This 177-nucleotide RNA was probed chemically with 2A3 and DMS.
Source: RMDB library RFMREP, as collected in RNAgym.
2A3 adducts were read by reverse transcription with SuperScript II with manganese.
For DMS the reverse transcriptase was MarathonRT.
Values cover nucleotides 27 to 126.
Conditions: 150 mM KOAc, 10 mM MgCl2 and 150 mM bicine (pH 8.5), 24 C.
The DMS profile rests on 2,969 reads.

RNA sequence: GGGAACGACUCGAGUAGAGUCGAAAAGGGUGGCUUCCGUGCCUGCAGAUGUCUGUGAAUUCCUCAAGGCUGAGACCCUGCAGCCAAAGAAGCUACCCAAACUUCUACUAACUUCGGUUAGUAGAAGCUUUGGGUAUCGCUUCGGCGAUACCCAAAGAAAAGAAACAACAACAACAAC
Reactivity to 2A3 in 0.01 (KOAc 150mM, MgCl2 10mM, bicine 150mM(pH8.5), 24C), signal-to-noise 2, nucleotides 027 to 126: g000g010g000u010g000g000c030u020u000c000c020g030u050g050c010c010u000g000c000a010g010a110u080g040u030c020u020g220u070g160a160a230u170u110c030c010u070c100a040a160g050g000c020u080g080a020g010a060c010c030c000u000g010c000a000g000c000c000a020a020a030g000a000a000g000c000u000a010c000c010c000a000a010a000c000u000u010c000u000a010c000u010a020a010c000u030u040c220g080g000u000u010a000g000u000a000g000a000a000g010
Reactivity to DMS in 0.01 (KOAc 150mM, MgCl2 10mM, bicine 150mM(pH8.5), 24C), signal-to-noise 4, nucleotides 027 to 126: g020g010g020u000g000g010c010u000u000c030c190g010u000g020c300c000u000g000c030a020g000a100u010g010u020c000u010g000u000g000a160a150u000u000c080c060u010c190a070a130g000g010c120u000g000a070g000a060c070c300c010u000g000c020a010g000c120c010a050a110a080g000a020a010g000c010u000a020c000c000c000a010a020a120c010u010u000c000u000a000c000u000a000a010c000u000u010c220g010g010u000u000a000g010u000a000g000a000a020g010